[RMDB]
RNA sequence: GGGAACGACUCGAGUAGAGUCGAAAAUGUAUUGGCAGUGCGUAUUUUGCCGUUGCGAGCAUCAUCACCAAAUCAUCAUCGCCCCUUGCGGGACACCUACUUGGAUACGGCGUUAGUCUUGGUGUCGAGCAUGCACUGCGUUCGCGCAGUGCAUGCUAAAAGAAACAACAACAACAAC
Reactivity to 2A3 in 0.01 (KOAc 150mM, MgCl2 10mM, bicine 150mM(pH8.5), 24C), signal-to-noise 1, nucleotides 027 to 126: u190g000u140a280u040u220g150g000c100a020g050u110g010c000g060u050a170u060u120u070u110g020c030c010g060u020u090g000c000g050a010g080c030a090u080c000a030u050c000a020c000c000a020a020a100u020c060a080u050c000a000u030c000g040c000c000c000c000u080u090g000c040g110g020g020a030c000a000c000c030u040a200c000u000u030g000g000a020u050a090c000g090g020c040g070u020u070a050g060u000c050u090u050g000g000u030g030u000c010g000